This 177-nucleotide RNA was probed chemically with 2A3 and DMS.
Reactivities are given for positions 27 through 126.
The DMS profile rests on 7,992 reads.
DMS adducts were read by reverse transcription with MarathonRT.
The RNA was probed in 150 mM KOAc, 10 mM MgCl2 and 150 mM bicine (pH 8.5) at 24 C.
RNA sequence: GGGAACGACUCGAGUAGAGUCGAAAAAUCUUGGCGAAGACAGCGCGGAAGGAGCGCGCAACUCCUUACCCUCGCCUUUUUUUUUCCGCUCCCGUUCGCGAAAGCGUUCAGCGGAAAAGGGACCAAAUUACAGUGAUAAGUUCGCUUAUCACUGUAAAAAAGAAACAACAACAACAAC
Reactivity to 2A3 in 0.01 (KOAc 150mM, MgCl2 10mM, bicine 150mM(pH8.5), 24C), signal-to-noise 2, nucleotides 027 to 126: a010u060c050u040u070g020g000c020g010a050a020g180a090c070a070g030c060g030c070g070g010a010a000g000g000a030g010c080g000c030g000c070a040a130c000u010c010c000u010u090a260c010c000c000u000c000g000c000c000u050u030u010u010u000u000u010u020u010c000c000g000c010u010c030c050c020g010u000u000c020g000c020g060a110a040a020g010c000g000u010u010c020a020g010c000g030g000a000a000a010a010g030g020g010a050c020c030a050a050a070
Reactivity to DMS in 0.01 (KOAc 150mM, MgCl2 10mM, bicine 150mM(pH8.5), 24C), signal-to-noise 5, nucleotides 027 to 126: a050u010c080u010u000g010g010c020g010a050a090g010a110c190a090g010c130g020c260g000g010a060a020g000g000a010g020c020g010c260g000c170a080a120c010u000c000c000u000u000a130c050c010c030u010c020g000c000c010u000u000u000u000u000u000u000u000u000c000c000g000c000u010c110c060c060g000u000u000c010g030c000g010a110a080a140g010c010g010u000u000c040a030g000c000g010g000a000a000a010a040g000g010g000a130c090c080a050a050a120